An RNA of 177 nucleotides, treated with DMS and 2A3 and read out base by base. The DMS profile rests on 981 reads. For 2A3, 989 sequencing reads were counted. Conditions: 150 mM KOAc, 10 mM MgCl2 and 150 mM bicine (pH 8.5), 24 C. For 2A3 the reverse transcriptase was SuperScript II with manganese.
RNA sequence: GGGAACGACUCGAGUAGAGUCGAAAACUAUCCAGCGACCAAGAUCAGAGCCAGACACCGGAAACCCCUGCCACACCACUAAGUUGUUGCACAGAGACUCAGUGGACAGUGCUCCAAUCCUCACUGCACGGUGGUGCAAGUUCGCUUGCACCACCGUAAAAGAAACAACAACAACAAC
Reactivity to DMS in 0.01 (KOAc 150mM, MgCl2 10mM, bicine 150mM(pH8.5), 24C), signal-to-noise 1, nucleotides 027 to 126: c100u000a000u000c030c000a150g000c160g000a000c090c040a140a090g040a040u150c010a010g000a000g000c000c010a050g000a030c150a080c030c010g000g000a130a120a080c010c000c000c000u030g010c040c000a040c100a090c020c000a000c050u070a030a100g000u000u000g000u000u060g010c130a060c100a020g000a150g000a120c040u000c050a060g050u030g020g020a060c080a060g000u000g010c080u040c000c000a040a060u000c000c000u000c040a110c090u010g000c140
Reactivity to 2A3 in 0.01 (KOAc 150mM, MgCl2 10mM, bicine 150mM(pH8.5), 24C), signal-to-noise 2, nucleotides 027 to 126: c010u070a090u110c000c000a010g010c020g050a030c050c020a110a020g020a070u120c070a030g050a020g080c000c030a020g020a050c030a020c050c010g000g020a060a030a030c000c000c000c050u020g000c010c000a000c010a010c000c000a000c030u020a040a050g020u020u020g070u060u110g030c140a030c010a030g100a030g000a020c010u010c030a010g020u040g000g000a090c040a010g020u040g020c030u000c010c000a010a000u000c000c010u000c000a060c020u050g020c030

Values cover nucleotides 27 to 126. DMS (dimethyl sulfate) methylates the pairing face of unpaired adenines and cytosines.